[RMDB]
RNA sequence: GGGAACGACUCGAGUAGAGUCGAAAACUGAACAUGCUGCGCGCGGCGGCGAUCGCCAUCCUGCUGGUUAGCGCAGGUUAUCCCGUCGCAUGGGCCUAUCAGGACGACCGUCUGAUCGGCAUAUUCUUCGCGCUUGGAGGCGGCGCGCUGAUCAGCGGGUUUUUAUGACGUUCGCGUCAUAAAAACCAAAAGAAACAACAACAACAAC
Reactivity to 2A3 in 0.01 (KOAc 150mM, MgCl2 10mM, bicine 150mM(pH8.5), 24C), signal-to-noise 1, nucleotides 027 to 156: c050u030g040a090a040c040a060u160g060c010u150g010c030g000c020g040c010g000g040c020g010g010c100g060a080u110c100g020c070c000a060u050c020c010u030g010c020u090g110g280u210u280a110g050c050g000c020a000g000g000u050u040a080u080c000c000c000g010u000c000g050c010a040u070g040g090g050c000c000u040a030u020c020a040g070g020a150c190g120a120c020c020g060u100c020u000g010a000u000c000g020g010c000a020u050a070u200u110c040u040u060c070g000c000g000c020u070u070g060g010a020g060g010c060g000g070c000g000c020g000c030u020g020a020u000c000a000g010c030g000